The record gives the reactivity of an RNA of 207 nucleotides to 2A3. The RNA was probed in 150 mM KOAc, 10 mM MgCl2 and 150 mM bicine (pH 8.5) at 24 C. Source: RMDB library RNAMAK, as collected in RNAgym. High 2A3 reactivity points to a flexible backbone, as in loops and unpaired stretches. Reactivities are given for positions 27 through 156.
[RMDB]
RNA sequence: GGGAACGACUCGAGUAGAGUCGAAAAGGGGUCUGCGUGGAGUGGCUAUAAUCGUCUGGCUAGCUCUGAAGCCUCCACGGAGCUUGGACCCAGACGGUAGCCACGAUGAAACGCAGACGGAGGCACCCAAAGGUUAGGAACUUCGGUUCCUAACCAAGCUUUUAAACGACUUCGGUCGUUUAAAAGCAAAAGAAACAACAACAACAAC
Reactivity to 2A3 in 0.01 (KOAc 150mM, MgCl2 10mM, bicine 150mM(pH8.5), 24C), signal-to-noise 1, nucleotides 027 to 156: g040g000g050g000u000c000u000g000c000g020u000g000g020a020g000u000g010g010c010u020a030u110a190a300u250c020g020u000c000u010g060g030c030u030a010g000c000u040c010u030g000a040a000g010c010c010u000c000c000a030c030g010g000a010g010c000u130u170g050g150a210c060c000c030a010g000a000c000g000g000u020a010g010c000c000a000c000g000a010u030g000a000a020a000c000g010c000a000g000a000c010g000g000a000g000g000c000a030c000c000c010a050a080a030g010g000u000u000a000g000g030a010a000c000u020u090c300g080g010u000u000c000c000u000a000a000c000c000a000a010